[RMDB]
RNA sequence: GGGAACGACUCGAGUAGAGUCGAAAAGGUGUUCGCCGCACAGAGUUCUCGAACUCGUCGCAGUCUAGAUGAUCCUUCACUUACAGACGGAGAAAUGACUUGUCUGCAUCGCACGUUUGGUGUUGAAGACGGAGACCGCUCGUGUUUAACGCGAGCGCGUCAACCCCUAAUUCGUUAGGGGUUGACGAAAAGAAACAACAACAACAAC
Reactivity to DMS in 0.01 (KOAc 150mM, MgCl2 10mM, bicine 150mM(pH8.5), 24C), signal-to-noise 1, nucleotides 027 to 156: g000g020u000g030u000u010c050g070c000c080g060c070a080c040a150g000a080g010u000u000c040u000c170g000a060a060c040u000c040g010u010c090g010c060a100g050u020c020u000a150g000a090u000g010a060u000c060c020u000u000c030a160c070u010u000a110c120a070g000a070c000g000g020a090g000a070a060a100u000g020a120c040u020u000g010u000c020u000g010c030a100u000c030g000c060a070c000g000u010u020u000g000g000u010g000u000u010g010a040a070g000a300c000g000g020a190g000a040c030c000g040c000u000c000g040u000g040u010u000u020a120a120c010g030c030g000a060g000c030g010
Reactivity to 2A3 in 0.01 (KOAc 150mM, MgCl2 10mM, bicine 150mM(pH8.5), 24C), signal-to-noise 3, nucleotides 027 to 156: g030g000u030g040u080u080c090g010c080c000g000c030a010c030a040g020a030g000u070u010c060u060c090g060a070a040c000u030c030g050u050c050g040c050a020g030u010c010u040a060g010a130u130g010a020u010c000c000u050u030c090a060c080u080u300a090c030a130g030a020c000g030g030a030g080a020a120a070u200g050a100c000u030u070g020u010c010u020g020c020a060u030c050g010c040a040c060g020u050u120u130g080g000u020g010u040u120g070a080a030g020a010c030g010g010a050g070a030c020c020g010c000u010c020g010u040g090u020u190u170a140a050c030g000c000g010a000g010c000g010

Structure probing data (DMS and 2A3) for a 207-nucleotide construct. It was measured as part of the RMDB library OK3TST. For 2A3 the reverse transcriptase was SuperScript II with manganese. As a SHAPE reagent, 2A3 marks flexible, mostly unpaired nucleotides at the ribose 2'-OH. For 2A3, 1,445 sequencing reads were counted.